RNA sequence: GGGAACGACUCGAGUAGAGUCGAAAACGGUACUAUGAAUUGAUGCAAGGUGUGGAGCGACCUUAAACAGUUCUGGUGGUGCUCUGAAUGGAGUGCUCUACUGAGAUUAUAAAAAAGAAGGUAAGCUGAAGGGGAAAUGAGUUCGCUCAUUUCCCAAGUAUAGCCAAAAGUUCGCUUUUGGCUAUACAAAAGAAACAACAACAACAAC
Reactivity to DMS in 0.01 (KOAc 150mM, MgCl2 10mM, bicine 150mM(pH8.5), 24C), signal-to-noise 1, nucleotides 027 to 156: c010g010g040u000a010c040u010a130u010g020a140a120u010u010g000a110u000g060c140a070a050g040g000u000g040u040g020g010a140g020c000g010a070c010c010u010u000a070a130a160c040a050g000u000u000c040u000g000g020u000g010g040u000g040c020u010c010u010g000a110a100u010g030g000a050g030u010g000c000u010c040u000a040c000u000g000a050g010a080u000u000a110u040a010a040a050a110a120a120g010a100a040g010g000u010a070a050g030c000u010g000a100a150g010g000g070g000a010a030a010u010g010a040g030u000u000c300g030c010u010c000a020u000u000u000c000c000c000a010a010
Reactivity to 2A3 in 0.01 (KOAc 150mM, MgCl2 10mM, bicine 150mM(pH8.5), 24C), signal-to-noise 6, nucleotides 027 to 156: c020g000g050u060a030c030u050a070u180g040a050a050u100u040g060a060u080g070c030a020a010g010g000u040g020u060g040g010a020g010c020g010a010c010c000u060u090a080a090a020c020a030g010u020u010c010u040g040g020u040g020g010u010g010c010u010c020u080g130a080a070u260g020g010a020g010u040g010c010u010c010u030a040c020u040g010a010g020a090u100u130a040u250a110a060a020a010a000a010g060a030a010g020g010u050a020a030g020c050u060g120a080a050g000g000g000g000a000a010a000u000g000a000g010u040u080c140g020c040u000c000a000u000u000u000c000c000c000a010a000